[RMDB]
RNA sequence: GGGAACGACUCGAGUAGAGUCGAAAAGACACUCUUCGCAGAUGACCUCCUCGUUGGUGAGUGUCGGUAAUGUUGUCAGUCACAGGCAACAGUUAACGAUCUGCGUAAAUAAAAAGAGAAGAACAAACAUGGAUGCUACGUUCGCGUAGCAUCCAUGAAAAGAAACAACAACAACAAC
Reactivity to 2A3 in 0.01 (KOAc 150mM, MgCl2 10mM, bicine 150mM(pH8.5), 24C), signal-to-noise 2, nucleotides 027 to 126: g000a000c010a000c000u000c000u090u060c010g000c000a010g000a020u000g000a030c010c000u030c040c040u030c100g130u040u190g010g030u030g020a010g000u060g020u010c010g000g020u050a030a010u010g000u000u000g000u000c000a070g130u100c070a050c020a140g060g000c000a000a000c010a000g010u000u040a000a020c030g010a000u000c000u000g000c000g000u020a010a090a010u090a030a100a020a010a000g170a000g060a150a020g020a030a010c060a170a050a000
Reactivity to DMS in 0.01 (KOAc 150mM, MgCl2 10mM, bicine 150mM(pH8.5), 24C), signal-to-noise 1, nucleotides 027 to 126: g000a000c020a000c000u000c000u000u010c000g000c000a030g000a030u020g020a000c010c000u030c040c000u000c120g020u010u030g010g040u000g000a060g000u000g070u000c000g000g000u000a010a010u000g030u010u030g000u040c000a090g090u020c300a000c300a160g000g010c000a000a010c080a060g040u000u000a000a000c000g060a040u000c010u000g010c000g000u010a110a110a090u040a020a040a010a030a160g030a150g020a100a050g000a080a010c070a090a070a110

Chemical mapping of a 177-nucleotide RNA with 2A3 and DMS. 2A3 adducts were read by reverse transcription with SuperScript II with manganese. It was measured as part of the RMDB library OK1LIB. For 2A3, 1,411 sequencing reads were counted.